[RMDB]
RNA sequence: GGGAACGACUCGAGUAGAGUCGAAAAGACUUCAAGUUAUCCACGUGAACCUGCACCAGUGCCGCGACAAAGCCACGUUGCUCCUGGAGUUAGCAACCCAACUGAAUUUUCCCAAGAGCUUUGGGCACCACCUCACUAUGUUCGCAUAGUGAGGUGGAAAAGAAACAACAACAACAAC
Reactivity to 2A3 in 0.01 (KOAc 150mM, MgCl2 10mM, bicine 150mM(pH8.5), 24C), signal-to-noise 4, nucleotides 027 to 126: g080a010c040u070u050c070a080a050g030u070u070a090u060c030c020a020c040g030u040g050a040a080c000c010u020g010c020a030c000c020a070g010u040g110c000c000g070c050g050a050c060a050a080a000g020c030c000a050c020g020u030u050g010c020u040c020c020u060g050g000a050g020u010u080a040g020c020a020a080c000c000c000a010a050c070u030g040a070a100u110u020u030u050c000c000c000a020a030g090a020g090c040u050u080u070g020g000g000c000a040
Reactivity to DMS in 0.01 (KOAc 150mM, MgCl2 10mM, bicine 150mM(pH8.5), 24C), signal-to-noise 2, nucleotides 027 to 126: g010a110c070u000u050c080a100a050g010u010u020a070u010c100c020a130c030g030u020g000a060a020c090c000u000g000c120a060c020c040a070g000u000g000c110c030g010c090g000a100c040a070a110a070g000c100c040a050c120g000u020u020g000c040u000c000c020u000g010g000a060g010u000u010a110g050c060a060a060c050c000c000a030a030c120u100g010a140a020u000u000u000u000c020c020c010a100a260g000a160g000c100u000u020u000g000g000g040c150a070